[RMDB]
Chemical mapping of a 177-nucleotide RNA with DMS. DMS adducts were read by reverse transcription with MarathonRT. The RNA was probed in 150 mM KOAc, 10 mM MgCl2 and 150 mM bicine (pH 8.5) at 24 C.
RNA sequence: GGGAACGACUCGAGUAGAGUCGAAAAUCACGGCAGCCGGGCCAACGCGCAUAGAUAAUCUGGUCGCACCGCUGCCCCACAAGGGCACCGACAGGCGCAUCACAGAUAUCACCGAAUGACUUCGGAGGAUACAAAUACCGUUCGCGGUAUUUGUAUCAAAAGAAACAACAACAACAAC
Reactivity to DMS in 0.01 (KOAc 150mM, MgCl2 10mM, bicine 150mM(pH8.5), 24C), signal-to-noise 2, nucleotides 027 to 126: u000c070a050c120g050g000c020a050g000c040c040g020g000g000c010c040a130a090c080g040c080g020c140a100u000a100g030a040u000a070a080u000c020u000g010g010u000c060g000c010a070c080c010g040c130u000g000c000c000c000c000a010c300a100a300g000g010g010c020a000c120c040g040a140c180a060g000g010c040g000c110a090u000c070a180c020a010g000a030u010a040u000c020a150c000c030g000a050a040u000g010a150c200u000u000c010g000g000a250g060